[RMDB]
RNA sequence: GGGAACGACUCGAGUAGAGUCGAAAAUAUUGCCUCCACCAGAUAUGCCUGCAAUUGAUGUUAGUGUAUUUGUUGAUGCUCAGUUAGUUGGUGAAACUGUUGGUGCUGAAUUAAUACCAUUAGAUGAGCUCAUACCAGGAUUCGUCCUGGUAUGAGCAAAAGAAACAACAACAACAAC
Reactivity to DMS in 0.01 (KOAc 150mM, MgCl2 10mM, bicine 150mM(pH8.5), 24C), signal-to-noise 1, nucleotides 027 to 126: u010a040u000u000g000c090c000u000c020c020a110c050c020a080g000a120u000a040u000g010c030c020u000g030c070a040a120u010u000g000a110u010g010u000u000a090g000u010g040u010a040u010u000u010g040u000u010g020a120u020g000c030u000c020a080g010u000u010a050g010u010u020g000g050u000g030a070a060a080c020u000g000u020u010g010g020u020g010c030u020g020a070a070u000u000a050a050u010a120c030c040a080u000u010a020g000a140u010g020a200